[RMDB]
RNA sequence: GGGAACGACUCGAGUAGAGUCGAAAAAUUUGGGAAAAUCACCUGUGGAAAAUGCGCAAUCGAGUACAAAAAUCUAACGCGAGAUGAGCUUGCCACGCGUGUUAAUAAGGAGAUCGAUGGAACCAUACCGCAUGAAAAGUUUCGACUUUUCAUGCGGAAAAGAAACAACAACAACAAC
Reactivity to DMS in 0.01 (KOAc 150mM, MgCl2 10mM, bicine 150mM(pH8.5), 24C), signal-to-noise 2, nucleotides 027 to 126: a090u030u010u000g000g000g000a110a050a030a050u010c040a040c030c030u000g000u010g000g000a030a100a040a050u040g000c050g000c180a100a110u020c020g020a090g020u000a060c190a000a080a170a070a060u030c120u000a040a080c100g020c080g030a050g000a050u000g000a140g000c010u030u000g000c110c100a050c040g020c070g040u000g000u000u000a100a060u030a040a100g000g000a070g000a130u000c030g020a030u040g000g000a240a060c060c020a120u000a130
Reactivity to 2A3 in 0.01 (KOAc 150mM, MgCl2 10mM, bicine 150mM(pH8.5), 24C), signal-to-noise 3, nucleotides 027 to 126: a000u020u000u000g000g000g010a020a030a010a030u050c040a050c070c050u070g030u160g120g030a130a150a060a230u170g000c030g010c070a010a020u070c000g020a010g040u110a060c070a030a190a070a010a010u020c060u120a140a070c050g000c020g050a040g010a020u080g030a000g020c050u020u070g010c040c010a040c050g050c010g000u040g040u090u000a170a160u120a190a010g050g040a090g070a070u050c040g010a030u120g010g000a050a000c010c000a010u060a110